Structure probing data (DMS and 2A3) for a 177-nucleotide construct.
For 2A3 the reverse transcriptase was SuperScript II with manganese.
DMS adducts were read by reverse transcription with MarathonRT.
The DMS profile rests on 6,707 reads.
Conditions: 150 mM KOAc, 10 mM MgCl2 and 150 mM bicine (pH 8.5), 24 C.
[RMDB]
RNA sequence: GGGAACGACUCGAGUAGAGUCGAAAAACGUAGUAGUGCCGCUUACAGAGGAGGCUGAGAAACUGUUAAAAGUUUUGAAGUCUGUUAAGAGGUAUGCAUAGGGCUGAGAAGUUCAUAUACCUGUGGACUCUACUAAGUUGUUCGCAACUUAGUAGAGAAAAGAAACAACAACAACAAC
Reactivity to DMS in 0.01 (KOAc 150mM, MgCl2 10mM, bicine 150mM(pH8.5), 24C), signal-to-noise 6, nucleotides 027 to 126: a090c100g010u010a090g020u010a100g020u000g010c010c020g010c030u010u000a050c040a110g020a150g030g010a050g010g000c010u010g000a300g010a010a020a010c000u000g010u000u010a110a130a140a040g000u000u000u000u000g010a280a020g010u000c000u000g010u000u000a060a050g010a030g010g020u000a020u000g000c090a080u000a080g000g000g010c030u010g000a140g010a120a070g010u010u000c030a070u010a080u000a080c040c030u010g020u000g010g000a220
Reactivity to 2A3 in 0.01 (KOAc 150mM, MgCl2 10mM, bicine 150mM(pH8.5), 24C), signal-to-noise 2, nucleotides 027 to 126: a000c050g020u040a020g040u020a010g070u060g020c000c020g020c060u030u020a030c020a050g110a060g180g100a030g090g000c020u000g010a020g010a020a030a000c010u010g030u090u080a040a140a030a030g010u000u000u020u010g000a000a000g000u000c020u060g090u050u030a060a020g030a000g040g010u040a020u060g000c020a040u080a080g010g040g000c030u030g010a030g030a190a020g030u050u020c040a020u140a010u050a170c000c020u050g040u040g100g030a040